Conditions: 150 mM KOAc, 10 mM MgCl2 and 150 mM bicine (pH 8.5), 24 C. An RNA of 177 nucleotides, treated with 2A3 and DMS and read out base by base. It was measured as part of the RMDB library OK2TST. DMS adducts were read by reverse transcription with MarathonRT.
[RMDB]
RNA sequence: GGGAACGACUCGAGUAGAGUCGAAAACGUGGUUCCGCGGUGGCCGCCUCUUCCUGCCGCGCAGGCCGAGGGUCCCGACGGCGCCGCUCACCGCUCCGGGACUCAGCCUUUCUGGGCCCGGCCUGCGGUUUCAUACACAAUUCGUUGUGUAUGAAACAAAAGAAACAACAACAACAAC
Reactivity to 2A3 in 0.01 (KOAc 150mM, MgCl2 10mM, bicine 150mM(pH8.5), 24C), signal-to-noise 8, nucleotides 027 to 126: c030g020u050g010g030u100u060c040c040g010c030g040g020u050g050g010c020c010g030c020c010u050c030u050u020c000c010u030g060c040c050g090c020g000c010a000g000g000c000c000g020a110g020g000g010u010c000c010c000g030a050c020g010g010c020g010c020c030g030c020u060c030a090c000c040g030c040u070c050c020g020g000g030a050c010u010c060a020g010c010c010u110u290u130c150u190g000g010g000c030c020c000g000g000c000c010u010g000c000g000
Reactivity to DMS in 0.01 (KOAc 150mM, MgCl2 10mM, bicine 150mM(pH8.5), 24C), signal-to-noise 9, nucleotides 027 to 126: c170g010u000g010g010u000u000c060c070g020c040g010g010u000g000g020c040c030g010c040c040u000c060u000u000c020c010u000g020c090c140g010c070g010c020a020g000g010c030c030g010a180g010g000g000u000c000c000c000g010a130c170g010g000c020g010c060c090g000c060u000c060a100c110c010g010c020u000c040c000g000g000g000a040c010u000c060a150g020c130c040u000u000u010c180u010g010g000g010c020c300c010g000g000c030c020u000g010c020g000